[RMDB]
RNA sequence: GGGAACGACUCGAGUAGAGUCGAAAAAGUGAGGAUCGGCCAGCGACCUGCCGAGGAGGCGAUCCGAACCCUCAACAAGCACCUCUGGCCGGGGUUCAGUGUGUACCCACUCACCGACGAGGUGCGCCCGAGAAUGACAUUUCGAUGUCAUUCUCGGAAAAGAAACAACAACAACAAC
Reactivity to 2A3 in 0.01 (KOAc 150mM, MgCl2 10mM, bicine 150mM(pH8.5), 24C), signal-to-noise 3, nucleotides 027 to 126: a000g130u040g010a010g020g000a030u020c030g130g040c100c050a030g060c050g110a280c020c040u110g080c070c050g040a060g060g030a070g000g010c030g000a030u030c010c000g010a020a030c000c000c010u050c000a020a190c030a080a040g020c000a000c030c000u040c060u110g110g020c090c020g000g000g040g000u120u130c040a080g020u060g050u060g040u170a080c000c010c010a020c020u060c030a050c020c020g040a050c030g010a010g010g010u010g000c000g060c000
Reactivity to DMS in 0.01 (KOAc 150mM, MgCl2 10mM, bicine 150mM(pH8.5), 24C), signal-to-noise 3, nucleotides 027 to 126: a050g010u000g000a190g000g000a080u000c030g020g010c010c030a150g000c060g010a160c070c010u000g010c170c080g000a080g040g000a150g000g000c000g010a020u010c020c000g000a070a060c070c010c010u010c100a130a090c180a130a140g010c000a010c000c000u000c030u000g030g020c030c060g020g000g010g010u010u010c140a050g020u010g000u010g020u010a100c120c150c000a070c040u000c080a110c040c020g010a050c070g000a030g000g030u000g000c020g020c160